RNA sequence: GGGAACGACUCGAGUAGAGUCGAAAAACGAAUCUGAUCUAAUUGGAAUAGAAGACAUGCCGCAGUUCAAGCUCGAUUACAACCCGUCCGCAGAUGAUGGAUCACUGCAAGGAGUCAGAACUGAGCCGUCAACGAUUCGAUUCGUCGAAUCGUUGACAAAAGAAACAACAACAACAAC
Reactivity to 2A3 in 0.01 (KOAc 150mM, MgCl2 10mM, bicine 150mM(pH8.5), 24C), signal-to-noise 1, nucleotides 027 to 126: a000c010g050a020a040u070c060u050g040a010u000c020u110a190a020u160u220g040g020a040a120u070a150g110a150a020g060a050c030a070u110g000c020c010g140c060a010g000u070u020c030a030a010g000c000u070c000g150a210u050u070a040c000a000a030c000c070c000g010u010c010c050g150c050a070g130a170u100g010a010u090g010g020a020u030c010a000c070u030g000c010a060a040g080g000a030g010u110c100a030g010a050a050c010u070g020a010g010c040c030
Reactivity to DMS in 0.01 (KOAc 150mM, MgCl2 10mM, bicine 150mM(pH8.5), 24C), signal-to-noise 1, nucleotides 027 to 126: a080c040g000a060a040u000c020u000g000a000u010c010u000a130a190u010u010g010g010a080a210u000a050g000a160a110g000a070c140a040u010g020c070c090g060c020a010g010u000u000c040a030a160g050c040u000c040g010a130u000u000a060c050a050a010c300c030c010g030u000c010c010g000c170a030g010a150u020g000a010u010g030g000a040u020c010a070c090u010g020c040a060a080g000g000a040g030u010c090a250g000a010a050c000u000g000a190g000c060c260
Structure probing data (2A3 and DMS) for a 177-nucleotide construct. The RNA was probed in 150 mM KOAc, 10 mM MgCl2 and 150 mM bicine (pH 8.5) at 24 C. For 2A3 the reverse transcriptase was SuperScript II with manganese. Reactivities are given for positions 27 through 126.